[RMDB]
RNA sequence: GGGAACGACUCGAGUAGAGUCGAAAAGUCUGGUAGGAACCAUUCAGUCCUCCUAUGCCUUCUUUCUCCAACUGUGUGGUCUUUCUUCUGAAACAAAGAAGAAAUAGCCAAAUCAGAAUUGCCCUCUGUCAUUUAUCUGUUUCGACAGAUAAAUGACAAAAGAAACAACAACAACAAC
Reactivity to 2A3 in 0.01 (KOAc 150mM, MgCl2 10mM, bicine 150mM(pH8.5), 24C), signal-to-noise 9, nucleotides 027 to 126: g040u020c030u040g030g050u090a080g020g110a070a060c020c000a040u090u110c040a040g070u040c000c010u030c010c000u090a100u140g040c010c000u060u060c010u030u080u020c040u030c030c020a040a070c030u000g000u010g040u070g070g030u030c020u000u010u000c000u010u000c000u010g080a120a130a080c080a050a210a020g010a000a000g010a000a010a000u050a010g010c000c000a040a070a090u070c010a000g100a110a090u080u090g050c010c010c000u040c040u030
Reactivity to DMS in 0.01 (KOAc 150mM, MgCl2 10mM, bicine 150mM(pH8.5), 24C), signal-to-noise 2, nucleotides 027 to 126: g000u000c000u010g000g010u000a100g020g000a170a070c020c020a080u000u010c040a100g010u000c040c010u000c050c020u000a080u010g010c030c020u000u010c050u010u020u000c000u000c040c100a100a170c010u000g000u000g000u000g020g000u000c190u000u000u000c000u000u000c000u000g020a080a090a070c300a040a110a080g000a010a020g010a020a020a070u010a140g000c010c000a020a090a030u010c010a020g010a090a110u010u000g010c020c000c000u000c130u010